[RMDB]
RNA sequence: GGGAACGACUCGAGUAGAGUCGAAAAGAUAUGGACGAGGGCAGAGCUUGGAUUUAUGGGUUGAAGUGGGUCGGAAACGACCCAUGGAGGACCCAUUGUCAGCUCGAUGCUCGUCCUAAGUCAAAGUGGAAAGUUUUGUUCGCAAAACUUUCCACAAGGCAAUAUACAGGUUCGCCUGUAUAUUGCCAAAAGAAACAACAACAACAAC
Reactivity to 2A3 in 0.01 (KOAc 150mM, MgCl2 10mM, bicine 150mM(pH8.5), 24C), signal-to-noise 2, nucleotides 027 to 156: g040a000u070a050u120g000g000a010c010g010a010g010g150g080c150a040g010a010g020c090u200u230g080g000a030u080u300u090a030u010g010g000g030u010u130g030a000a040g000u000g010g040g000u000c010g030g000a100a160a010c000g010a010c010c050c020a020u020g000g000a020g070g220a010c020c010c020a010u000u010g000u010c010a000g000c000u040c000g000a000u010g000c000u020c000g000u000c000c000u000a010a000g000u000c040a120a030a070g000u000g000g000a010a000a000g000u000u000u000u000g060u060u150c260g090c170a000a030a000a010c020u010u010u010c000c000a020c000a000a000